[RMDB]
RNA sequence: GGGAACGACUCGAGUAGAGUCGAAAAUACGCCGUUUUUAUGCCGAGAUUGGAAGUGGUGAUCUUGGCUACGUGCCAGACGCACUACGCUGUGUAUUGAAAGCAUUGGACGAAGUUGCGGCUAACGAAAUGAGUGCAUUAUUCGUAAUGCACUCAUUAAAAGAAACAACAACAACAAC
Reactivity to 2A3 in 0.01 (KOAc 150mM, MgCl2 10mM, bicine 150mM(pH8.5), 24C), signal-to-noise 7, nucleotides 027 to 126: u120a020c060g010c010c000g000u020u030u010u040u110a070u090g020c000c000g030a020g000a040u060u120g130g080a230a120g090u070g090g060u090g030a040u010c010u040u100g000g000c020u020a050c070g050u100g040c000c010a000g000a040c070g010c060a000c010u080a040c070g020c080u040g030u030g020u130a090u090u140g090a080a030a020g040c030a010u060u150g030g000a050c020g040a090a040g090u190u160g000c010g000g000c030u030a070a030c060g040a060
Reactivity to DMS in 0.01 (KOAc 150mM, MgCl2 10mM, bicine 150mM(pH8.5), 24C), signal-to-noise 9, nucleotides 027 to 126: u010a110c160g010c040c010g010u000u000u010u010u010a040u020g020c000c010g010a190g000a030u000u000g020g020a120a130g030u010g020g020u000g000a110u000c010u000u000g040g010c000u000a030c160g020u000g020c030c070a030g000a050c090g010c000a030c020u000a060c060g010c070u000g010u000g010u000a060u000u010g010a110a140a150g000c020a040u000u010g020g000a090c060g010a090a090g010u000u000g010c030g010g010c040u010a050a080c150g000a090